[RMDB]
RNA sequence: GGGAACGACUCGAGUAGAGUCGAAAAGAGCUUAGGUCUGUAAUGUCAUGGUAGAACAUGACAUGUAACGGUUAAGCUUGGUUGGGAACCGUUCGCAUGUUCUACUAUGUGAAGAUAUUCCAACAUAGAUAGUAUACAUAUUCGUGUGUGUGCUAUCAAAAGAAACAACAACAACAAC
Reactivity to DMS in 0.01 (KOAc 150mM, MgCl2 10mM, bicine 150mM(pH8.5), 24C), signal-to-noise 9, nucleotides 027 to 126: g000a070g000c050u010u010a060g010g010u020c020u010g010u020a090a070u020g010u010c000a010u000g000g000u000a030g000a040a040c000a000u000g000a090c130a060u020g020u030a010a010c000g000g000u000u000a060a100g010c060u010u020g010g010u010u010g010g000g010a040a030c020c010g010u000u000c030g000c010a010u000g000u000u010c040u010a020c020u010a000u000g000u010g000a080a040g000a060u020a090u010u000c010c010a080a090c150a100u030a120
Reactivity to 2A3 in 0.01 (KOAc 150mM, MgCl2 10mM, bicine 150mM(pH8.5), 24C), signal-to-noise 9, nucleotides 027 to 126: g060a010g010c050u070u080a030g000g030u040c020u030g050u120a030a020u080g070u110c000a010u000g000g010u020a010g000a030a010c000a000u000g060a070c010a070u050g030u030a010a000c000g010g010u030u100a050a030g050c000u050u080g140g020u130u130g030g010g030a030a020c020c010g020u010u000c010g000c010a000u010g010u020u030c010u020a020c000u030a000u000g010u010g040a040a010g030a040u060a080u100u030c020c010a030a020c020a120u080a050